Structure probing data (DMS) for a 177-nucleotide construct. It was measured as part of the RMDB library TTRINS. Conditions: 150 mM KOAc, 10 mM MgCl2 and 150 mM bicine (pH 8.5), 24 C. Values cover nucleotides 27 to 126.
RNA sequence: GGGAACGACUCGAGUAGAGUCGAAAAGAUAUGGAAGCCAAUAAUCUCUAGCGUGGCGCAUGUGAAACUAAUCGGAAACGAUUAGGAGUACGCAUGAACUACGCUCGGGUUAUUGGCUUCCUAAGUCCAUAUGUGGCUACUUCGGUAGCCACAUAUGAAAAGAAACAACAACAACAAC
Reactivity to DMS in 0.01 (KOAc 150mM, MgCl2 10mM, bicine 150mM(pH8.5), 24C), signal-to-noise 3, nucleotides 027 to 126: g030a080u010a300u010g000g010a010a010g030c000c000a010a030u010a000a010u000c000u020c040u000a010g000c000g020u000g020g040c300g000c010a000u010g000u000g000a170a160a190c000u000a000a000u000c000g000g000a190a130a290c010g010a010u000u000a000g020g020a100g000u000a070c300g000c010a000u010g000a050a070c000u000a000c000g010c010u000c300g010g000g020u000u000a000u000u000g000g000c010u000u000c000c000u000a010a050g000u000c060